[RMDB]
RNA sequence: GGGAACGACUCGAGUAGAGUCGAAAAGAUAUGGACUACUUAGCUUUUGACGAAGUCACCCUCGGAAACGAGGGAAGUCUUCGAUAAGCUAACUAGUCCUAAGUCAAAAUCUCGCUUCGGCGAGAAAGUACAUCGCUAUGUUCGCAUAGCGAUGUACAAAAGAAACAACAACAACAAC
Reactivity to 2A3 in 0.01 (KOAc 150mM, MgCl2 10mM, bicine 150mM(pH8.5), 24C), signal-to-noise 2, nucleotides 027 to 126: g040a000u050a050u130g000g000a000c010u020a000c010u050u000a000g000c020u070u180u150u300g300a240c100g000a020a020g000u020c050a100c020c010c000u000c000g000g040a110a070a090c010g010a000g000g020g000a000a000g010u010c000u000u000c010g050a070u000a190a020g000c000u000a020a000c010u020a000g000u030c000c000u010a050a000g020u020c010a030a010a040a300u030c000u000c000g020c030u060u050c120g220g030c010g010a000g030a040a040a000
Reactivity to DMS in 0.01 (KOAc 150mM, MgCl2 10mM, bicine 150mM(pH8.5), 24C), signal-to-noise 2, nucleotides 027 to 126: g000a020u000a300u000g020g000a000c000u000a010c120u010u000a010g020c010u000u000u000u020g020a270c190g010a010a000g010u020c040a260c010c000c000u020c000g000g000a080a060a120c010g030a010g020g000g010a000a010g000u000c000u020u000c000g000a050u010a000a020g010c000u000a000a010c080u020a000g000u010c000c000u000a000a190g010u010c020a130a110a110a070u000c010u000c000g040c000u000u030c260g020g040c020g000a010g000a020a020a080